[RMDB]
RNA sequence: GGGAACGACUCGAGUAGAGUCGAAAAGAUAUGGAAUCUAAGGGCAUCGAUCGUAUUACUGACGGUGGCUGUAUUCGGAAACGAAUACAGCCACCCGAUGGGUACGGGAGCCUAUGAUUCCUAAGUCCAGGUAAUAUUACUUCGGUAAUAUUACCUGAAAAGAAACAACAACAACAAC
Reactivity to DMS in 0.01 (KOAc 150mM, MgCl2 10mM, bicine 150mM(pH8.5), 24C), signal-to-noise 3, nucleotides 027 to 126: g010a080u010a300u000g000g000a030a010u000c000u020a120a300g000g010g030c010a230u010c180g000a140u000c000g000u000a010u000u000a130c000u000g010a300c300g000g000u000g030g020c010u000g020u000a000u010u000c020g000g020a100a060a170c010g000a030a010u000a000c010a010g000c030c000a000c000c000c010g000a070u000g000g000g010u000a000c000g010g010g000a040g020c000c000u000a300u010g000a020u000u000c000c000u000a030a100g020u010c060
Reactivity to 2A3 in 0.01 (KOAc 150mM, MgCl2 10mM, bicine 150mM(pH8.5), 24C), signal-to-noise 4, nucleotides 027 to 126: g060a030u170a090u290g000g000a020a000u020c020u090a160a300g070g000g000c050a190u300c180g130a100u050c010g010u010a040u060u070a300c010u020g020a020c020g000g010u010g000g000c000u000g010u010a010u000u010c020g000g030a030a090a080c020g000a000a000u000a010c010a010g000c010c010a010c000c000c000g000a000u000g000g000g000u010a000c010g000g000g010a000g000c000c000u020a030u050g010a010u010u000c000c000u020a280a020g020u030c070
The record gives the reactivity of an RNA of 177 nucleotides to DMS and 2A3. The 2A3 profile rests on 8,887 reads. The reactions ran in a buffer of 150 mM KOAc, 10 mM MgCl2 and 150 mM bicine (pH 8.5), at 24 C.